Chemical mapping of a 177-nucleotide RNA with DMS and 2A3. The RNA was probed in 150 mM KOAc, 10 mM MgCl2 and 150 mM bicine (pH 8.5) at 24 C. Reactivities are given for positions 27 through 126.
RNA sequence: GGGAACGACUCGAGUAGAGUCGAAAAUGGAACCGCAGUUGGUUCCUCGGAACUAAACUCGUGGUUCCUGUGGUUCACACCUGACCUCCUGAGCAGAAAAGAAAAAAGAAGGCGGCUCGGAGGAGCGCAUAUCUAUCAAGUUCGCUUGAUAGAUAUGAAAAGAAACAACAACAACAAC
Reactivity to DMS in 0.01 (KOAc 150mM, MgCl2 10mM, bicine 150mM(pH8.5), 24C), signal-to-noise 7, nucleotides 027 to 126: u000g010g000a010a000c000c000g040c030a030g020u000u000g010g000u000u000c000c010u010c290g020g000a010a010c000u000a030a020a010c010u000c180g040u000g000g010u000u000c000c000u000g010u000g010g010u000u000c130a080c110a130c040c040u000g010a140c020c010u000c010c000u010g030a040g020c020a120g000a070a070a080a110g010a010a070a080a090a110a090g010a120a110g000g010c120g010g010c010u000c010g000g010a030g000g000a040g020c140g000
Reactivity to 2A3 in 0.01 (KOAc 150mM, MgCl2 10mM, bicine 150mM(pH8.5), 24C), signal-to-noise 6, nucleotides 027 to 126: u060g010g010a000a000c000c000g000c010a000g010u020u030g000g010u010u000c000c000u010c090g080g010a010a010c010u100a270a050a040c010u090c140g000u000g000g000u000u010c000c000u000g020u030g010g060u120u120c070a040c010a040c090c030u060g110a130c000c000u000c010c030u150g010a000g010c030a010g160a110a140a090a030g200a060a240a050a070a020a000g100a060a030g140g090c140g030g010c010u000c010g010g000a010g000g010a010g030c070g000
Background:
For DMS the reverse transcriptase was MarathonRT.